[RMDB]
RNA sequence: GGGAACGACUCGAGUAGAGUCGAAAAGGCCUAUUAAAUCACGGGCUGUGAUAACUAAAGUAUGUUUCGAAGAAGGACGUAGCAUAAUUGGUAGACUGAAAUCUGUGAUGUUAGUGCGUACAAAGACAAAUUCGAGGAUUUUCGAAUCCUCGAAUUUAAAAGAAACAACAACAACAAC
Reactivity to 2A3 in 0.01 (KOAc 150mM, MgCl2 10mM, bicine 150mM(pH8.5), 24C), signal-to-noise 2, nucleotides 027 to 126: g000g000c000c000u030a040u060u250a140a130a000u060c010a010c070g070g040g000c120u080g030u060g070a080u040a130a040c030u020a020a020a030g040u050a050u140g030u020u050u080c130g050a190a140g040a060a040g140g050a040c020g030u010a020g010c010a060u020a050a040u130u050g050g000u070a050g060a070c020u050g030a090a000a040u000c030u010g020u030g040a040u030g010u030u080a060g020u060g100c020g000u000a010c050a100a050a000g080a030c060
Reactivity to DMS in 0.01 (KOAc 150mM, MgCl2 10mM, bicine 150mM(pH8.5), 24C), signal-to-noise 3, nucleotides 027 to 126: g010g000c000c010u000a060u010u010a090a170a090u010c050a040c060g000g000g010c070u010g010u010g020a130u000a050a060c070u010a050a050a100g010u000a020u000g000u010u000u000c050g010a090a070g020a100a140g000g000a110c040g000u000a040g000c010a030u000a030a060u000u000g010g010u000a050g010a080c050u000g010a050a090a070u010c020u000g030u000g010a020u000g010u010u010a020g020u010g000c050g000u010a090c130a080a060a090g000a100c160